This 207-nucleotide RNA was probed chemically with 2A3 and DMS. Reactivities are given for positions 27 through 156. DMS adducts were read by reverse transcription with MarathonRT.
RNA sequence: GGGAACGACUCGAGUAGAGUCGAAAAUACCGAUUUCCACGGUCAUCGUUGCGACGUUCUGGCCGUUACGCUGCACGCGGAACUGGUAAUAGGCCGGGCUUGCGCCGUCGGCCAUGUCGAACUGUGAGCCAACCAUAUUGGCAGGCAGAUACAUCGGAUACGUGGAGAGAUUCGUCUCUCCACGUAUAAAAGAAACAACAACAACAAC
Reactivity to 2A3 in 0.01 (KOAc 150mM, MgCl2 10mM, bicine 150mM(pH8.5), 24C), signal-to-noise 4, nucleotides 027 to 156: u090a020c000c000g020a040u060u030u020c030c010a020c050g010g040u020c040a110u130c020g040u010u100g080c060g040a020c010g030u100u200c040u050g030g000c010c000g000u000u030a020c050g020c040u060g030c050a030c100g040c040g020g010a120a080c090u080g040g000u100a090a100u080a230g030g000c000c020g060g000g020c050u180u120g040c060g000c040c010g100u090c020g000g000c030c000a010u030g010u020c010g000a050a070c010u030g010u050g020a020g040c010c010a030a060c060c020a140u110a090u220u020g010g000c010a020g130g060c010a000g020a050u060a140c040a100u050c030g030g000
Reactivity to DMS in 0.01 (KOAc 150mM, MgCl2 10mM, bicine 150mM(pH8.5), 24C), signal-to-noise 3, nucleotides 027 to 156: u000a060c000c010g000a170u000u010u000c000c020a000c020g030g020u000c050a080u010c040g000u000u010g060c040g040a120c040g000u000u000c080u010g050g020c040c020g010u010u000a010c010g000c050u010g020c060a100c140g020c010g020g030a050a170c030u000g000g010u000a040a160u000a140g010g040c010c000g030g000g030c020u000u010g040c080g000c010c020g020u020c000g010g000c000c000a030u000g000u000c030g000a070a140c060u010g010u000g020a300g060c040c020a020a090c030c170a080u020a300u000u000g010g050c010a050g000g000c020a080g010a120u010a040c090a050u010c030g000g010